[RMDB]
RNA sequence: GGGAACGACUCGAGUAGAGUCGAAAAGGCAGGACGACUAGAAGUGGGGAGAGCUUCCAGGUCACAGAUAGGUGAGACACAAAUGGUUACAUUCUUUUGAGUUUCUAAUUAGCUUUUCCAAAGGACGCAAAUCAGAUAUCCAUCUAUCUCAGUGAGACGUGAGGGGACUAUUCGUAGUCCCCUCACGAAAAGAAACAACAACAACAAC
Reactivity to 2A3 in 0.01 (KOAc 150mM, MgCl2 10mM, bicine 150mM(pH8.5), 24C), signal-to-noise 2, nucleotides 027 to 156: g030g010c040a010g000g020a020c040g010a000c060u100a020g040a100a020g050u100g030g000g000g000a070g000a000g010c030u020u030c040c020a030g000g060u020c010a010c020a050g020a000u020a000g040g000u030g010a180g010a090c050a030c030a160a150a050u020g050g000u010u000a030c010a050u050u010c010u000u100u030u020g080a100g010u030u020u020c100u040a200a180u170u120a100g030c040u000u000u190u040c040c010a020a050a020g000g010a000c070g060c090a030a030a000u050c000a000g000a040u040a030u110c020c010a010u020c010u000a000u000c010u000c040a090g020u030g030a060g000a020